[RMDB]
RNA sequence: GGGAACGACUCGAGUAGAGUCGAAAACGGUAUUGGUCAAGGCUAUACCGACAGCGCACCUUCAAAAGGGCGCUUAAUCCCCGGCCAAGCGCCGAAAUAUGAAUAGACACCGCUGCGCUGGUAGGGCAAAACAUGGCGAUCUUCGGAUCGCCAUGAACAUUAGCUAUAGCUUCGGCUAUAGCUAAUGAAAAGAAACAACAACAACAAC
Reactivity to 2A3 in 0.01 (KOAc 150mM, MgCl2 10mM, bicine 150mM(pH8.5), 24C), signal-to-noise 3, nucleotides 027 to 156: c020g000g030u030a050u090u190g020g030u070c080a120a110g100g000c000u010a000u000a020c000c010g030a030c020a020g000c000g000c040a300c060c020u080u150c090a100a110a050a030g000g000g010c000g010c000u000u010a010a000u000c010c010c000c000g020g000c010c010a090a050g020c020g000c030c020g050a040a040a010u240a040u070g090a060a080u090a100g070a050c050a010c080c060g030c070u060g000c000g000c010u030g020g020u040a050g000g030g000c010a030a010a000a060c000a000u000g000g000c020g000a000u000c010u030u040c120g060g000a000u000c000g000c000c000a000u000g000a000a000
Reactivity to DMS in 0.01 (KOAc 150mM, MgCl2 10mM, bicine 150mM(pH8.5), 24C), signal-to-noise 2, nucleotides 027 to 156: c000g010g000u000a020u010u000g080g020u000c050a100a130g030g030c020u010a090u000a060c000c010g000a150c120a020g010c060g040c010a090c000c000u010u000c140a080a090a140a100g000g010g000c020g000c040u010u010a040a130u000c030c010c000c040g000g020c050c000a110a140g000c060g060c000c020g020a010a080a090u000a110u010g000a120a160u010a130g000a090c030a040c060c030g030c010u000g030c030g030c030u010g000g020u000a040g000g010g030c100a040a080a110a150c010a010u000g010g000c010g010a020u000c000u000u030c300g030g020a000u000c010g010c000c000a000u000g010a030a110
Source: RMDB library M2RFOK, as collected in RNAgym. The record gives the reactivity of an RNA of 207 nucleotides to 2A3 and DMS. For 2A3, 2,707 sequencing reads were counted. The RNA was probed in 150 mM KOAc, 10 mM MgCl2 and 150 mM bicine (pH 8.5) at 24 C.